[RMDB]
RNA sequence: GGGAACGACUCGAGUAGAGUCGAAAACAGAGUUUUUGCGGGAGGUUUACGGCAAAUUAGCGGCAAUUUGCCGGAAAUGGAAUUACGGAGAGAUCAUCGUAGAAUACACCGAGUCGGAAGGAGAACGAGAUAUUGAACGAUAGAAUAGCUUUUAACGUAUUCGUAACGUUUUCGAACGUUACGAAUAAAAAGAAACAACAACAACAAC
Reactivity to DMS in 0.01 (KOAc 150mM, MgCl2 10mM, bicine 150mM(pH8.5), 24C), signal-to-noise 3, nucleotides 027 to 156: c050a150g010a120g000u000u010u000u010u000g050c080g000g000g010a070g030g020u000u000u010a040c010g000g010c000a010a040a020u000u000a070g020c090g010g010c100a130a070u000u000u000g010c000c000g000g010a010a020a110u000g010g000a090a110u010u000a120c060g020g010a060g000a090g010a100u000c050a060u000c020g020u020a070g010a100a080u000a060c050a060c050c020g000a080g030u010c030g010g020a060a090g030g000a100g000a040a080c030g020a040g000a120u010a160u000u000g010a070a090c080g000a110u000a060g010a050a090u000a080g020c060u000u000u000u000a060a180c120g000
Reactivity to 2A3 in 0.01 (KOAc 150mM, MgCl2 10mM, bicine 150mM(pH8.5), 24C), signal-to-noise 5, nucleotides 027 to 156: c050a020g080a040g060u040u040u050u120u150g040c050g010g010g010a030g010g030u060u120u140a010c010g000g000c000a010a010a010u050u030a060g050c050g040g000c020a010a020u010u010u010g000c000c030g000g000a020a010a000u070g020g030a030a040u100u030a120c080g000g010a020g010a020g000a030u080c010a020u030c050g040u080a020g030a080a040u140a100c050a010c040c030g000a000g030u020c030g020g020a010a020g050g020a010g000a040a030c060g010a020g010a060u080a070u120u130g050a070a010c040g030a040u080a110g070a070a070u060a060g030c000u040u120u080u160a090a050c070g020
An RNA of 207 nucleotides, treated with DMS and 2A3 and read out base by base. The DMS profile rests on 5,549 reads. The RNA was probed in 150 mM KOAc, 10 mM MgCl2 and 150 mM bicine (pH 8.5) at 24 C.